[RMDB]
RNA sequence: GGGAACGACUCGAGUAGAGUCGAAAAGAUAUGGAAGGUCACUAGCUUUGAUCUCCUACUCGGAAACGAGUAGGGAGGGAGCUACUGACCUUCCUAAGUCAAAAGCCAUUGGGUUCGCCCAAUGGCAGUUCCAAACUGAGUUCGCUCAGUUUGGAACAAAAGAAACAACAACAACAAC
Reactivity to 2A3 in 0.01 (KOAc 150mM, MgCl2 10mM, bicine 150mM(pH8.5), 24C), signal-to-noise 2, nucleotides 027 to 126: g030a000u070a030u140g020g000a000a000g040g030u000c000a000c040u020a000g060c020u260u110u130g230a300u170c080u050c020c000u010a000c000u000c010g010g010a090a090a050c000g010a010g020u030a050g010g010g010a040g000g020g030a030g010c000u020a000c010u000g000a000c000c010u000u000c000c000u000a010a010g010u000c010a030a000a180a100g050c010c010a010u010u010g030g010g100u110u120c300g210c080c000c020a000a000u010g000g000c010a000
Reactivity to DMS in 0.01 (KOAc 150mM, MgCl2 10mM, bicine 150mM(pH8.5), 24C), signal-to-noise 2, nucleotides 027 to 126: g000a040u000a300u000g000g010a000a010g000g000u000c010a000c090u000a000g010c000u010u010u000g020a090u020c030u010c000c000u010a000c000u000c000g040g000a060a060a180c000g000a030g020u000a000g010g020g000a000g010g000g000a010g020c000u000a010c160u000g010a020c000c000u000u020c000c000u000a000a100g020u010c030a070a130a130a200g010c000c000a010u000u000g000g000g000u010u000c300g000c000c000c010a000a000u000g000g000c000a010